[RMDB]
RNA sequence: GGGAACGACUCGAGUAGAGUCGAAAAUGGACGUUGUUCGCAACGUCCACAUACUGAGACGUACGUUAUACGUAUCGCGGGCAAAAGUGCAGUUAGAAUAAGUACCUAUUGAGUUCGCUCAAUAGAAAGCCAAGGAAUGGUUCGCCAUUCCUUGGCUAAAAGAAACAACAACAACAAC
Reactivity to DMS in 0.01 (KOAc 150mM, MgCl2 10mM, bicine 150mM(pH8.5), 24C), signal-to-noise 1, nucleotides 027 to 126: u010g000g000a000c000g020u000u000g040u010u010c230g050c020a040a040c010g010u010c000c000a020c140a010u020a080c030u000g000a120g010a170c020g000u010a040c060g000u000u000a130u000a110c020g000u000a010u000c040g000c050g000g040g040c090a030a020a050a140g000u000g000c020a070g000u000u000a090g000a110a130u000a080a100g000u010a110c200c000u000a010u000u000g000a020g010u000u000c040g020c000u000c020a000a020u010a020g000a040a090
Reactivity to 2A3 in 0.01 (KOAc 150mM, MgCl2 10mM, bicine 150mM(pH8.5), 24C), signal-to-noise 1, nucleotides 027 to 126: u070g010g000a000c010g000u020u010g010u010u040c090g070c110a000a010c000g010u000c000c000a000c000a010u050a000c020u050g020a050g000a070c050g000u060a000c010g050u110u180a170u010a160c000g050u040a020u150c020g000c050g050g000g050c050a040a060a020a020g000u060g010c010a040g070u010u030a080g040a120a060u140a110a030g060u020a050c020c020u000a010u000u000g000a010g000u010u060c230g010c080u000c010a000a000u030a010g080a080a060

About this RNA
Source: RMDB library M2PK50, as collected in RNAgym. Structure probing data (DMS and 2A3) for a 177-nucleotide construct. The 2A3 profile rests on 977 reads. DMS adducts were read by reverse transcription with MarathonRT.